[RMDB]
RNA sequence: GGGAACGACUCGAGUAGAGUCGAAAAGGAUCUGAGUACUUAUAAGUGCGAAGUGAGUGAGGGUCUUACGAGCACGAAUUACAUCCCUCUAUUAAGUAUCGAAGAUCGGCCGGAGAUCGAGAUACAACUAUUACCCGGCGACUGUACGAAGAUCCGAACGCUGAUAUACUUUCGAGUAUAUCAGCGUAAAAGAAACAACAACAACAAC
Reactivity to DMS in 0.01 (KOAc 150mM, MgCl2 10mM, bicine 150mM(pH8.5), 24C), signal-to-noise 2, nucleotides 027 to 156: g020g000a000u020c020u000g020a300g020u000a020c000u020u010a050u000a090a080g030u000g020c000g000a150a280g060u020g000a000g000u000g000a080g030g000g000u000c070u000u000a060c060g020a300g020c020a030c060g000a090a100u030u010a090c060a170u000c000c010c010u000c030u000a150u010u000a070a160g000u000a030u000c000g020a190a180g020a100u000c020g030g000c100c020g010g000a300g020a090u000c040g000a300g000a050u000a050c060a060a110c150u000a060u000u000a080c060c000c000g020g010c060g010a060c210u020g000u020a060c020g000a080a020g000a070u000c000c020g010a060
Reactivity to 2A3 in 0.01 (KOAc 150mM, MgCl2 10mM, bicine 150mM(pH8.5), 24C), signal-to-noise 3, nucleotides 027 to 156: g000g000a000u000c000u040g020a010g040u000a010c030u110u130a120u070a300a110g000u000g000c010g030a060a010g010u000g010a000g010u130g020a010g050g000g000u110c000u000u000a000c010g010a020g010c010a000c040g040a030a180u180u050a080c070a140u140c010c000c000u020c000u010a120u120u210a150a040g000u000a000u020c010g000a050a010g020a020u010c050g030g000c010c020g000g000a090g010a030u010c010g000a000g000a070u000a000c000a050a000c020u070a030u200u210a060c000c000c000g010g000c010g020a040c080u060g000u000a010c010g000a010a000g000a010u000c000c000g000a010